[RMDB]
RNA sequence: GGGAACGACUCGAGUAGAGUCGAAAAUCUGUGGUUCUCCUCUCUGUGCUCCAACAGUUACACUUAGAGGCUAAUAGUAGGGCCUGGGCUUUCUGUGUUAAAUGCCAUAAUGAUAUAUUGGCAGCAAGUAGUUGGUCGUUCGCGACCAACAAAAGAAACAACAACAACAAC
Reactivity to 2A3 in 0.01 (KOAc 150mM, MgCl2 10mM, bicine 150mM(pH8.5), 24C), signal-to-noise 3, nucleotides 027 to 129: u080c030u030g070u040g010g000u130u000c040u070c010c000u000c000u000c000u000g050u040g000c020u050c060c000a020a030c010a190g090u150u120a000c040a000c050u020u070a000g000a000g000g000c000u020a080a070u070a130g140u010a110g000g060g000c000c000u000g010g000g010c000u010u050u020c070u010g040u000g100u060u010a170a060a000u070g000c000c030a010u020a070a040u120g110a000u070a050u030a060u300u000g000g000c000a000g010c000a020a030g000u070a000
Reactivity to DMS in 0.01 (KOAc 150mM, MgCl2 10mM, bicine 150mM(pH8.5), 24C), signal-to-noise 3, nucleotides 027 to 129: u030c000u000g080u080g010g010u000u050c000u000c030c020u030c070u080c000u040g050u020g010c120u030c050c050a100a130c240a120g030u010u050a060c090a100c070u000u070a070g050a090g000g000c080u050a000a000u040a000g010u070a090g000g000g000c000c090u000g050g030g000c050u050u020u000c110u020g000u010g010u020u070a110a070a100u000g030c070c000a050u000a050a140u000g010a160u020a180u030a050u050u010g000g000c040a020g040c110a080a110g000u040a070